[RMDB]
RNA sequence: GGGAACGACUCGAGUAGAGUCGAAAAGGUUUAAUUGGACUCAACGCCGGAAAUCUCACCGGUCCCGACAGUAGUAAUGACGGUCAGGUUGACGACUUUACCCGACGCUACUGAGAGGAGGUGCAUGGAAAGAGUCAAUCUUCGGAUUGACUCUUUCAAAAGAAACAACAACAACAAC
Reactivity to DMS in 0.01 (KOAc 150mM, MgCl2 10mM, bicine 150mM(pH8.5), 24C), signal-to-noise 5, nucleotides 027 to 126: g000g000u000u000u020a070a130u010u020g000g000a070c060u000c140a050a150c140g000c020c000g000g000a050a060a080u010c050u000c050a130c010c000g020g010u000c000c000c010g030a300c030a020g010u010a030g000u000a040a120u040g010a300c300g010g000u000c300a010g020g000u000u010g010a200c240g010a070c000u000u010u000a050c030c000c000g010a200c180g010c020u000a020c020u000g000a070g020a210g000g010a030g010g010u000g010c140a070u010g000
Reactivity to 2A3 in 0.01 (KOAc 150mM, MgCl2 10mM, bicine 150mM(pH8.5), 24C), signal-to-noise 4, nucleotides 027 to 126: g090g000u030u030u070a110a060u160u180g090g050a030c030u030c080a080a060c150g040c010c000g030g050a070a050a040u080c060u020c000a060c020c000g050g060u040c010c000c000g030a020c000a000g010u010a000g010u010a160a190u220g030a030c000g030g000u000c060a010g010g050u040u060g180a050c100g020a020c010u010u010u010a000c000c000c010g000a000c060g030c000u000a000c000u010g040a040g000a010g110g030a010g010g010u030g030c070a080u140g070